RNA sequence: GGGAACGACUCGAGUAGAGUCGAAAAGGGGUCGGACGAGGAUCAGGGUAUCCGCAUAGUUCUAGACAUGAUCACACACUGAAGCCUCCACGGUGUGGAUCAACAGCUAGAACUAUGCGGAUACCCUGAUCUCCCCACCGUCCGACGGAGGCACCCACUAUUCAUAAGGCUUCGGCCUUAUGAAUAGAAAAGAAACAACAACAACAAC
Reactivity to DMS in 0.01 (KOAc 150mM, MgCl2 10mM, bicine 150mM(pH8.5), 24C), signal-to-noise 1, nucleotides 027 to 156: g020g000g020g010u000c010g000g010a030c030g020a300g030g000a060u010c000a060g030g010g000u000a000u000c000c000g060c000a010u000a020g060u000u000c000u000a010g000a060c070a300u020g000a050u000c000a140c020a000c000a020c000u000g020a100a130g070c100c040u000c010c060a300c040g010g020u000g000u010g010g000a050u000c000a030a080c150a200g000c010u010a000g000a010a020c000u000a000u000g000c000g000g000a000u000a000c000c010c010u010g010a000u010c010u020c180c010c030c050a300c110c030g000u000c000c000g010a020c020g000g010a090g020g050c010a300c000c000c010a270

Background: Structure probing data (DMS) for a 207-nucleotide construct. It was measured as part of the RMDB library RNAMAK. Conditions: 150 mM KOAc, 10 mM MgCl2 and 150 mM bicine (pH 8.5), 24 C. DMS adducts were read by reverse transcription with MarathonRT. Values are in units of 0.01, from 0 to 300, in steps of 10. Values cover nucleotides 27 to 156.